[RMDB]
RNA sequence: GGGAACGACUCGAGUAGAGUCGAAAACGGGUGCGGAUGACCAUGCACAGCAUGCGUCGCCGACGGUGCUAUGUCCCCAGGGUCACGUGAACGCAUGGGACUACAGGUUCUGUGAGCGGUGCGGCUCGCGUAGUCCCAAUUUCGAUUGGGACUACGCAAAAGAAACAACAACAACAAC
Reactivity to 2A3 in 0.01 (KOAc 150mM, MgCl2 10mM, bicine 150mM(pH8.5), 24C), signal-to-noise 5, nucleotides 027 to 126: c060g030g030g080u240g040c030g070g020a220u080g030a030c000c000a010u020g010c070a140c130a300g000c000a010u070g070c090g040u020c010g030c040c010g010a010c010g010g010u050g010c030u090a040u110g040u060c000c000c000c000a040g040g020g020u040c030a030c090g090u090g130a190a000c010g000c120a050u050g010g010g020a030c030u100a080c040a120g160g030u040u040c010u020g020u030g040a040g020c020g000g060u040g030c020g030g000c020u030c050
Reactivity to DMS in 0.01 (KOAc 150mM, MgCl2 10mM, bicine 150mM(pH8.5), 24C), signal-to-noise 3, nucleotides 027 to 126: c040g000g010g010u010g020c000g000g020a100u010g000a000c000c010a030u000g020c000a180c290a150g000c030a000u000g010c130g020u000c000g000c030c040g020a060c030g010g000u000g000c130u010a070u010g000u010c040c020c020c150a180g020g000g000u020c030a050c040g000u000g000a190a080c110g000c030a070u000g000g000g020a030c030u000a060c190a160g010g000u000u000c010u000g010u010g000a080g010c060g000g030u000g000c060g000g000c020u000c050
Record summary:
This 177-nucleotide RNA was probed chemically with 2A3 and DMS. Conditions: 150 mM KOAc, 10 mM MgCl2 and 150 mM bicine (pH 8.5), 24 C. Reactivities are given for positions 27 through 126. For 2A3, 3,523 sequencing reads were counted.